[RMDB]
RNA sequence: GGGAACGACUCGAGUAGAGUCGAAAAUAAAAUCCCAACCUCCCUCCCUCGGUCGGUCGGUCCCUGCGUGCGAGCCUCCGGCCGGCCGGCCCUCCCUCCCUGCGUGCGUGCCUCCCUCCCAAAAAAACUUAACUUAGGAGUUCGCUCCUAAGUUAAGAAAAGAAACAACAACAACAAC
Reactivity to DMS in 0.01 (KOAc 150mM, MgCl2 10mM, bicine 150mM(pH8.5), 24C), signal-to-noise 2, nucleotides 027 to 126: u010a050a090a100a160u010c010c000c000a160a280c070c020u010c010c000c010u000c020c020c100u000c050g030g000u000c000g010g030u000c010g010g010u020c010c050c040u010g010c090g020u010g000c100g010a100g030c040c060u000c020c100g000g000c020c000g010g010c010c000g000g000c010c010c020u010c010c020c010u000c030c010c010u000g010c040g000u000g020c050g020u010g010c040c010u000c010c010c010u000c000c000c000a020a000a050a130a050a050a120